The record gives the reactivity of an RNA of 207 nucleotides to DMS and 2A3. For DMS the reverse transcriptase was MarathonRT. For DMS, 3,651 sequencing reads were counted. The RNA was probed in 150 mM KOAc, 10 mM MgCl2 and 150 mM bicine (pH 8.5) at 24 C. Reactivities are given for positions 27 through 156. For 2A3, 1,740 sequencing reads were counted.

RNA sequence: GGGAACGACUCGAGUAGAGUCGAAAACACAUCGGGGCCUCACCUGGAGCUAGUGAUUCUCGUCCCCCUCUGGGCCUCACCCUGACGUGGUGACUCUGGUCCCCACCUGGAUAUCACCGGAACCGGGUGACUCUGGUCCCCCUCUGGGACCCACCCGGGUAUAUAUCAUAUUCGUAUGAUAUAUACCAAAAGAAACAACAACAACAAC
Reactivity to DMS in 0.01 (KOAc 150mM, MgCl2 10mM, bicine 150mM(pH8.5), 24C), signal-to-noise 1, nucleotides 027 to 156: c050a060c110a110u020c020g000g010g000g050c040c030u000c020a040c020c000u000g070g010a130g030c060u000a070g020u010g010a190u010u000c060u020c060g000u010c000c000c020c050c030u000c030u020g010g010g020c020c030u000c080a060c010c020c010u000g020a100c110g040u010g020g000u010g010a070c050u010c030u020g000g020u000c000c020c010c010a080c050c020u030g020g000a120u000a060u000c040a050c030c020g010g030a060a090c020c030g010g000g010u010g010a040c120u000c090u010g020g020u000c000c010c000c070c080u000c060u020g000g010g020a050c020c020c000a060c000c000c020g010
Reactivity to 2A3 in 0.01 (KOAc 150mM, MgCl2 10mM, bicine 150mM(pH8.5), 24C), signal-to-noise 2, nucleotides 027 to 156: c050a000c000a070u150c060g010g010g030g000c040c000u020c040a020c030c040u050g030g010a020g000c060u090a040g080u050g070a130u220u080c180u170c190g160u150c040c020c000c000c000u040c020u020g000g000g010c040c010u030c020a030c020c000c020u060g030a040c090g030u060g020g000u020g010a010c010u040c090u210g050g000u060c030c010c000c010a030c000c010u020g030g000a020u020a020u190c030a020c030c020g010g010a020a010c020c020g000g030g010u000g010a000c030u020c030u170g000g010u030c010c000c000c000c000u080c080u060g000g000g000a010c020c000c000a020c000c000c000g000